This 177-nucleotide RNA was probed chemically with 2A3 and DMS.
Reactivities are given for positions 27 through 126.
Conditions: 150 mM KOAc, 10 mM MgCl2 and 150 mM bicine (pH 8.5), 24 C.
For DMS, 790 sequencing reads were counted.
The 2A3 profile rests on 1,590 reads.
For 2A3 the reverse transcriptase was SuperScript II with manganese.
RNA sequence: GGGAACGACUCGAGUAGAGUCGAAAACGGCAUAUGCGGUACCCCGCGCAUCCUCGUUAUGGGAUGUCAUUGGCGGAAGCUGAAGUCGAUCGCACUCUUCUGACGUCAAAGAGGCACAUAUAUAACCGCGUAACAUCGUGUUCGCACGAUGUUACGCAAAAGAAACAACAACAACAAC
Reactivity to 2A3 in 0.01 (KOAc 150mM, MgCl2 10mM, bicine 150mM(pH8.5), 24C), signal-to-noise 2, nucleotides 027 to 126: c030g060g060c040a050u100a090u300g020c010g080g000u180a220c040c020c000c000g010c010g000c010a000u030c000c000u100c030g150u130u220a200u300g020g000g050a030u040g000u060c030a090u020u090g010g000c030g000g000a010a010g000c000u000g060a130a010g040u030c050g100a090u150c070g010c030a040c000u000c000u010u010c010u040g090a030c020g020u030c050a000a080a000g110a080g020g010c020a000c040a040u200a010u040a000u060a020a000c040c020
Reactivity to DMS in 0.01 (KOAc 150mM, MgCl2 10mM, bicine 150mM(pH8.5), 24C), signal-to-noise 1, nucleotides 027 to 126: c090g000g020c130a050u000a080u000g000c060g000g010u000a210c010c080c000c050g000c150g020c010a010u000c040c000u010c100g010u000u000a080u000g030g020g000a040u000g010u000c110a280u000u020g000g050c000g000g010a280a060g030c020u000g000a060a020g010u000c010g020a120u020c180g000c300a080c020u000c000u000u000c000u000g000a250c050g000u000c000a050a020a070g010a030g000g000c010a040c070a060u000a030u000a020u010a030a050c140c110